Notes: An RNA of 177 nucleotides, treated with 2A3 and DMS and read out base by base. The DMS profile rests on 10,164 reads. DMS adducts were read by reverse transcription with MarathonRT. It was measured as part of the RMDB library OK1LIB. Conditions: 150 mM KOAc, 10 mM MgCl2 and 150 mM bicine (pH 8.5), 24 C. The 2A3 profile rests on 1,559 reads.
[RMDB]
RNA sequence: GGGAACGACUCGAGUAGAGUCGAAAAUGGUGUUAAGUGGAAUAAGUGGAAAAAUAUACAUAUAUGUACAGGGGGCUACAUAUAUGUAUAUGCCCCCUUUACUCAGUAUAAGUAGGUAUAAGGUGGAGAUAUCGUCAGUAUUCGUACUGACGAUAUCAAAAGAAACAACAACAACAAC
Reactivity to 2A3 in 0.01 (KOAc 150mM, MgCl2 10mM, bicine 150mM(pH8.5), 24C), signal-to-noise 2, nucleotides 027 to 126: u100g010g020u020g000u140u120a110a080g030u060g080g060a120a120u130a100a100g010u130g040g040a010a010a010a140a070u020a000u000a000c000a000u020a000u010a010u010g000u010a010c100a110g000g000g000g140g000c050u000a000c020a000u030a000u010a010u030g010u010a000u000a000u010g000c000c000c000c000c000u000u020u020a040c040u000c050a000g050u070a050u010a180a090g090u140a020g060g050u070a170u030a150a040g030g000u020g010g060a090
Reactivity to DMS in 0.01 (KOAc 150mM, MgCl2 10mM, bicine 150mM(pH8.5), 24C), signal-to-noise 4, nucleotides 027 to 126: u020g000g000u000g010u000u000a060a140g010u010g000g000a090a050u020a080a060g010u020g020g000a030a060a070a110a020u000a000u000a010c010a030u000a030u010a020u000g010u000a020c110a130g010g010g010g010g020c140u020a010c020a020u010a050u020a040u020g010u010a010u010a020u020g000c040c010c010c000c010u000u000u000a000c020u000c120a110g010u010a080u020a070a080g000u020a040g010g000u020a050u030a020a040g010g030u010g000g010a250